[RMDB]
RNA sequence: GGGAACGACUCGAGUAGAGUCGAAAAGAAAGAAAGAAAGCUGACCCUUCUGCUGACGGAUCUUGUGGAGCACCACAGUGCAGAAGGGGAGAGAAGCUUUAAUGCCGACCGUCUGGGGAGCCUUGAAAAAACGGAUUCUUCUUCGGAAGAAUCCGAAGUUAACAAUUAGCUUCGGCUAAUUGUUAACAAAAGAAACAACAACAACAAC
Reactivity to 2A3 in 0.01 (KOAc 150mM, MgCl2 10mM, bicine 150mM(pH8.5), 24C), signal-to-noise 2, nucleotides 027 to 156: g030a030a070a000g050a020a120a010g090a020a050a000g000c020u040g110a050c000c010c000u000u000c000u000g030c040u060g030a050c040g120g030a090u150c040u170u090g010u040g020g080a080g150c110a100c070c000a000c000a020g040u040g050c000a000g010a000a000g010g010g040g000a010g010a010g000a030a000g000c000u070u040u040a090a050u110g030c000c000g020a020c000c020g040u050c050u110g000g030g000g000a010g040c010c040u050u060g060a110a070a000a010a000a000c020g000g000a000u000u000c000u000u000c000u020u000c080g070g000a000a000g000a000a000u000c010c000g000a000a000
Reactivity to DMS in 0.01 (KOAc 150mM, MgCl2 10mM, bicine 150mM(pH8.5), 24C), signal-to-noise 1, nucleotides 027 to 156: g010a060a080a150g000a170a090a170g010a100a060a020g000c000u010g020a120c040c000c000u010u000c010u070g000c020u000g010a140c110g040g010a080u000c050u010u060g030u010g010g020a120g020c200a100c010c010a030c010a060g000u000g000c000a020g000a010a070g010g010g030g000a030g000a130g010a110a030g000c020u000u000u010a090a080u010g010c000c040g020a130c010c030g000u010c020u020g000g030g000g060a130g010c080c020u000u000g020a000a050a080a060a110a160c010g010g010a000u000u000c000u010u010c010u000u000c300g040g010a020a020g000a000a020u000c000c000g020a000a060
An RNA of 207 nucleotides, treated with 2A3 and DMS and read out base by base. For 2A3 the reverse transcriptase was SuperScript II with manganese. The RNA was probed in 150 mM KOAc, 10 mM MgCl2 and 150 mM bicine (pH 8.5) at 24 C. Source: RMDB library M2RFPK, as collected in RNAgym.